[RMDB]
RNA sequence: GGGAACGACUCGAGUAGAGUCGAAAAGGGGUCGCUCGGGAGGUGCCUGAGUAGCUUGGAUUUAUGGGACUGAAGCCUCCACGGUCCCAUUGUCAGCUAAGAGGGCACCAUCGAUCGAGCGACGGAGGCACCCAAAACUGCGGCUUCGGCCGCAGAACAUUCAGCGAAAGUUCGCUUUCGCUGAAUGAAAAGAAACAACAACAACAAC
Reactivity to 2A3 in 0.01 (KOAc 150mM, MgCl2 10mM, bicine 150mM(pH8.5), 24C), signal-to-noise 1, nucleotides 027 to 156: g020g000g030g020u000c000g030c000u020c000g020g000g020a030g060g020u050g040c000c030u080g050a170g200u090a010g020c130u210u300g200g020a070u230u230u130a020u090g010g010g000a000c000u000g010a130a000g000c010c000u000c000c000a020c000g000g000u000c000c000c000a000u000u030g010u010c060a000g000c010u000a040a080g040a050g160g000g000c030a010c010c030a010u040c000g000a010u020c000g000a000g010c030g000a000c010g000g000a000g000g000c030a040c000c000c000a040a120a050a050c000u000g000c000g010g050c020u070u070c210g160g010c020c020g000c000a000g000a000a000